Chemical mapping of a 207-nucleotide RNA with 2A3. Values cover nucleotides 27 to 156.
RNA sequence: GGGAACGACUCGAGUAGAGUCGAAAAGGCAGCUUUCGAGCUGCCAAAAAGCGUACUACUGGACAUGCUCGGUACGGGUAGGAGAUCCCAAAUAGGAUCUCCUAUAAUCCGUAUUGAGCAACAGCCAGUAUCGCAAAAAACAGUAUUCGUACUGUAACUGCGAGGUAUAAUUCGUUAUACCUCGCAGAAAAGAAACAACAACAACAAC
Reactivity to 2A3 in 0.01 (KOAc 150mM, MgCl2 10mM, bicine 150mM(pH8.5), 24C), signal-to-noise 1, nucleotides 027 to 156: g010g060c000a020g040c040u060u160u210c190g070a020g000c000u030g050c000c000a000a000a000a000a010g050c060g020u080a100c070u000a000c000u040g000g020a140c050a140u050g000c020u010c010g050g000u000a000c000g000g000g040u000a000g020g020a050g000a000u000c110c000c000a150a210a210u300a040g000g000a000u010c000u000c000c000u000a000u000a000a000u050c010c010g000u000a010u000u000g020a000g030c000a030a010c010a030g000c010c010a020g030u000a000u040c020g000c000a000a280a180a000a000a000c010a010g000u050a010u150u260c170g040u050a010c000u050g000u090a150a040